[RMDB]
The record gives the reactivity of an RNA of 207 nucleotides to DMS and 2A3.
Values cover nucleotides 27 to 156.
Conditions: 150 mM KOAc, 10 mM MgCl2 and 150 mM bicine (pH 8.5), 24 C.
For 2A3, 10,759 sequencing reads were counted.
Source: RMDB library M2RFOK, as collected in RNAgym.

RNA sequence: GGGAACGACUCGAGUAGAGUCGAAAAAUCAGAGGGCGCUAUCAUGCAAACUAGGAUUGUCUGCUCAUGCACAGAACCAAUUACCGAUAACUAACAGUGCAUGAAGGUUAGUUAUUCCAUAUUAAUUAAAACUCGUAAUUCUUCGGAAUUACGAGAAGUUAUAUACAACGUUCGCGUUGUAUAUAACAAAAGAAACAACAACAACAAC
Reactivity to DMS in 0.01 (KOAc 150mM, MgCl2 10mM, bicine 150mM(pH8.5), 24C), signal-to-noise 3, nucleotides 027 to 156: a100u000c020a130g000a080g000g000g030c270g010c050u000a090u010c070a060u030g020c030a120a200a140c050u000a120g020g010a110u000u020g000u010c030u000g030c030u010c040a050u000g050c010a080c020a170g010a080a090c080c060a080a080u010u010a190c070c060g020a050u000a020a030c020u000a020a020c040a090g050u010g010c030a030u010g010a040a130g020g020u000u010a030g010u000u000a030u000u000c020c030a120u010a090u000u000a070a150u010u010a050a090a090a190c000u000c000g010u000a010a000u000u000c000u000u000c300g050g020a010a010u000u000a000c000g000a000g010a020a050
Reactivity to 2A3 in 0.01 (KOAc 150mM, MgCl2 10mM, bicine 150mM(pH8.5), 24C), signal-to-noise 9, nucleotides 027 to 156: a010u040c030a020g020a040g040g030g000c020g000c020u080a130u300c070a080u280g010c020a020a030a020c010u030a020g030g030a040u030u050g040u040c020u060g040c010u000c010a000u010g000c010a010c000a010g050a120a070c040c020a090a130u150u110a120c060c070g030a010u010a010a000c000u000a000a010c010a030g020u010g030c000a000u000g010a020a020g070g000u010u000a000g000u000u010a020u080u050c020c010a050u060a060u260u210a170a100u150u140a050a090a060a080c000u000c000g000u000a000a000u000u000c010u010u030c120g090g000a000a000u000u000a000c000g000a000g000a000a000